[RMDB]
RNA sequence: GGGAACGACUCGAGUAGAGUCGAAAAGAUAUGGACCGAAGUCCAACAGCUAUACGUCGGAAACGACGUGAUAGACAUGGUCACGGUCCUAAGUCAAAAUCCUGCUGACCUUCGGGUCAGCAGGAAACUCCCACUCUAAGUUCGCUUAGAGUGGGAGAAAAGAAACAACAACAACAAC
Reactivity to 2A3 in 0.01 (KOAc 150mM, MgCl2 10mM, bicine 150mM(pH8.5), 24C), signal-to-noise 2, nucleotides 027 to 126: g000a010u020a020u060g000g000a020c010c000g070a150a060g020u030c020c020a080a080c200a300g000c010u020a010u000a030c000g000u000c010g020g000a030a010a000c000g000a000c000g000u010g000a000u010a000g020a120c130a300u110g000g000u020c020a000c040g000g020u010c000c000u000a020a010g020u020c020a030a030a000a280u010c010c000u010g010c010u000g020a000c000c000u050u120c300g040g000g010u010c010a000g040c020a010g000g020a020a000a010
Reactivity to DMS in 0.01 (KOAc 150mM, MgCl2 10mM, bicine 150mM(pH8.5), 24C), signal-to-noise 2, nucleotides 027 to 126: g000a030u000a190u010g000g000a020c000c000g010a140a180g040u000c000c000a010a140c280a150g000c000u000a000u010a010c010g000u000c010g000g020a030a060a050c020g000a010c010g000u010g010a020u000a000g000a090c100a160u000g010g000u010c040a300c030g000g000u000c000c000u000a000a090g000u000c010a080a110a120a130u000c000c000u010g000c000u010g010a030c000c000u000u010c160g010g000g000u000c000a010g000c020a000g010g000a000a020a120
This 177-nucleotide RNA was probed chemically with 2A3 and DMS. 2A3 adducts were read by reverse transcription with SuperScript II with manganese. Conditions: 150 mM KOAc, 10 mM MgCl2 and 150 mM bicine (pH 8.5), 24 C. Values cover nucleotides 27 to 126.